[RMDB]
RNA sequence: GGGAACGACUCGAGUAGAGUCGAAAAUACGAUUAGCGCGCUAGCGCGCUAUAUACGGCAUAUUAUACGUACGAUUAGCCGAUUAAUGCCGGCUAGCAUUAUAAUCGAUUAUAUAUACGGCCGUAUAUACUAGAGAUGGGUUCGCCCAUCUCUAGUAAAAAGAAACAACAACAACAAC
Reactivity to 2A3 in 0.01 (KOAc 150mM, MgCl2 10mM, bicine 150mM(pH8.5), 24C), signal-to-noise 2, nucleotides 027 to 126: u180a060c010g040a100u000u090a000g000c000g000c000g020c200u090a050g120c020g000c010g000c080u000a050u000a010u000a030c000g000g000c000a010u030a020u080u070a050u060a040c010g160u010a100c010g070a070u020u040a010g000c050c020g000a050u120u180a120a070u210g120c010c000g000g040c020u010a040g000c030a090u120u140a060u270a260a010u050c000g000a040u270u030a040u020a010u030a010u000a040c170g060g000c010c000g000u010a010u010a010
Reactivity to DMS in 0.01 (KOAc 150mM, MgCl2 10mM, bicine 150mM(pH8.5), 24C), signal-to-noise 2, nucleotides 027 to 126: u010a100c130g000a150u010u010a030g010c010g020c010g000c110u010a120g000c020g040c000g020c010u010a020u000a000u010a000c020g020g000c010a130u000a130u010u000a040u000a050c170g020u000a030c030g000a040u010u000a030g000c020c020g030a120u000u010a050a080u000g030c200c020g000g020c050u010a080g000c170a100u010u000a110u010a060a060u000c000g000a080u000u010a120u000a030u000a010u010a040c170g020g010c000c010g000u000a000u000a010

An RNA of 177 nucleotides, treated with 2A3 and DMS and read out base by base.
Values cover nucleotides 27 to 126.
The reactions ran in a buffer of 150 mM KOAc, 10 mM MgCl2 and 150 mM bicine (pH 8.5), at 24 C.
2A3 adducts were read by reverse transcription with SuperScript II with manganese.